Overview:
An RNA of 177 nucleotides, treated with 2A3 and DMS and read out base by base. For DMS the reverse transcriptase was MarathonRT. Reactivities are given for positions 27 through 126.
RNA sequence: GGGAACGACUCGAGUAGAGUCGAAAAUGUUUAAUAAAAACAUAGCUCUCUGCUAGCCCGUAAGGGUGUGUACAGAGGGCGACACCUGCCCAGUGCUGGCACGUGAAGCUGGAGUUCAGUUCAGUGAGCUCAAUUAUCAGUUCGCUGAUAAUUGAGCAAAAGAAACAACAACAACAAC
Reactivity to 2A3 in 0.01 (KOAc 150mM, MgCl2 10mM, bicine 150mM(pH8.5), 24C), signal-to-noise 3, nucleotides 027 to 126: u020g010u010u020u030a300a240u200a080a190a010a010a000c000a000u040a050g000c000u020c000u000c010u000g000c040u060a050g000c010c000c010g020u090a160a210g000g000g000u020g000u030g010u010a020c000a010g000a000g000g000g020c000g010a000c020a020c020c020u020g010c000c000c000a060g010u100g080c140u030g040g000c000a000c080g030u040g120a070a020g010c030u010g020g010a050g020u150u120c050a030g020u090u050c010a010g020u030g110a030
Reactivity to DMS in 0.01 (KOAc 150mM, MgCl2 10mM, bicine 150mM(pH8.5), 24C), signal-to-noise 3, nucleotides 027 to 126: u000g010u000u000u010a100a130u030a060a050a030a010a010c010a030u000a110g010c010u010c000u000c020u010g010c010u010a300g020c000c000c000g020u060a130a150g010g000g000u000g020u010g010u000a110c000a000g010a020g000g000g000c000g000a070c120a050c010c070u000g000c020c000c030a180g010u040g000c110u020g000g010c030a040c080g000u010g000a070a120g010c020u000g000g010a120g000u020u010c120a050g010u020u000c040a070g010u010g000a170